RNA sequence: GGGAACGACUCGAGUAGAGUCGAAAACAUCAUCCCUUCGGGGAUGAUGAAAGAUCGAAAGAUCAGGCUUACCCUAAUAAGCCAAAAUACGAGCGAAACGCAAAAGACCUGUGUUCGCACAGGUCAAGCACAGAGAGUAGUUCGCUACUCUCUGUGCAAAAGAAACAACAACAACAAC
Reactivity to 2A3 in 0.01 (KOAc 150mM, MgCl2 10mM, bicine 150mM(pH8.5), 24C), signal-to-noise 2, nucleotides 027 to 126: c000a000u010c000a010u020c020c000c050u010u010c190g070g000g000g000a000u000g000a000u000g000a000a000a020g010a000u000c000g040a060a000a010g000a000u010c040a020g020g000c000u020u060a050c010c010c000u030a150a080u070a110a030g000c000c000a010a000a020a060u250a030c070g030a030g030c050g070a180a120a040c110g000c100a110a080a040a000g000a000c000c000u010g010u000g030u080u120c300g050c060a000c000a000g000g000u000c000a000a000
Reactivity to DMS in 0.01 (KOAc 150mM, MgCl2 10mM, bicine 150mM(pH8.5), 24C), signal-to-noise 1, nucleotides 027 to 126: c010a000u000c000a020u010c010c000c000u000u020c130g050g000g000g000a000u000g000a000u020g000a060a030a030g000a020u000c000g020a200a100a090g000a000u000c000a120g000g020c000u000u000a000c050c030c010u010a030a160u000a040a000g000c000c000a210a020a110a110u020a010c160g040a130g030c020g000a040a080a140c130g010c140a030a030a060a080g010a020c000c000u000g010u000g020u000u040c210g130c030a010c000a000g000g010u000c000a000a060